Source: RMDB library OK3TST, as collected in RNAgym. This 207-nucleotide RNA was probed chemically with 2A3. The RNA was probed in 150 mM KOAc, 10 mM MgCl2 and 150 mM bicine (pH 8.5) at 24 C. For 2A3 the reverse transcriptase was SuperScript II with manganese.
RNA sequence: GGGAACGACUCGAGUAGAGUCGAAAAAGCUGGAAUGAGUUGCCUUUGUAGGCAGUGAGUUUCCAAUAGCUGGCUGGAAGUUCCAGAACAGGGAUUCUUAGCCUUAGAAGUGUAGUUGUGUUGGGCCUUUCCAACCCGAUUGAGUAACUUUCAGCUGGUCUUCCCUGUUAUUCGUAACAGGGAAGACAAAAGAAACAACAACAACAAC
Reactivity to 2A3 in 0.01 (KOAc 150mM, MgCl2 10mM, bicine 150mM(pH8.5), 24C), signal-to-noise 1, nucleotides 027 to 156: a000g030c050u020g010g000a050a010u020g010a000g010u020u000g020c090c060u140u100u300g250u280a040g040g000c040a010g000u070g010a080g000u090u110u010c000c000a000a010u040a110g000c000u040g000g010c000u000g000g020a010a010g010u030u030c040c000a010g040a030a050c060a030g030g040g030a050u080u130c020u090u210a100g060c000c000u110u000a130g000a180a010g040u050g060u230a060g060u100u070g020u000g050u020u020g110g010g000c050c100u010u070u030c000c000a000a000c000c060c000g000a000u050u150g090a050g050u070a000a000c000u000u030u030c000a030g000c000u000g000